[RMDB]
RNA sequence: GGGAACGACUCGAGUAGAGUCGAAAACUGCACUAACUCUUGCUCUCACCCAGCUAAUCCCUGCCUCGCCCUGGCUGCCCCAGGGGCUGACCAUUAACAGCCAGCCCUGCCCAUCUUGGGGGGCUCCUUCGUGCCAUUGAUUCGUCAAUGGCACGAAAAAAGAAACAACAACAACAAC
Reactivity to DMS in 0.01 (KOAc 150mM, MgCl2 10mM, bicine 150mM(pH8.5), 24C), signal-to-noise 2, nucleotides 027 to 126: c040u020g070c070a070c110u020a010a100c040u000c000u000u000g000c050u010c000u030c070a070c080c010c050a190g000c080u000a210a120u000c020c030c010u010g000c080c010u000c030g030c010c010c050u040g010g020c020u050g000c020c010c000c050a110g020g010g000g030c040u010g020a020c010c030a130u020u020a060a170c230a090g000c000c000a020g000c000c000c000u000g040c020c020c030a120u050c140u030u030g010g000g000g000g020g000c030u000c080c040
Reactivity to 2A3 in 0.01 (KOAc 150mM, MgCl2 10mM, bicine 150mM(pH8.5), 24C), signal-to-noise 3, nucleotides 027 to 126: c010u040g040c010a010c050u100a160a010c020u030c000u030u090g030c000u000c010u010c010a020c000c030c020a000g010c020u040a050a070u080c000c000c000u000g040c030c000u020c020g020c000c000c010u010g010g030c050u110g060c000c000c010c000a020g010g000g000g000c030u010g000a030c000c030a090u130u180a160a050c010a020g040c010c000a000g010c000c020c010u010g010c010c000c020a060u070c070u160u120g000g000g000g000g020g000c010u020c010c000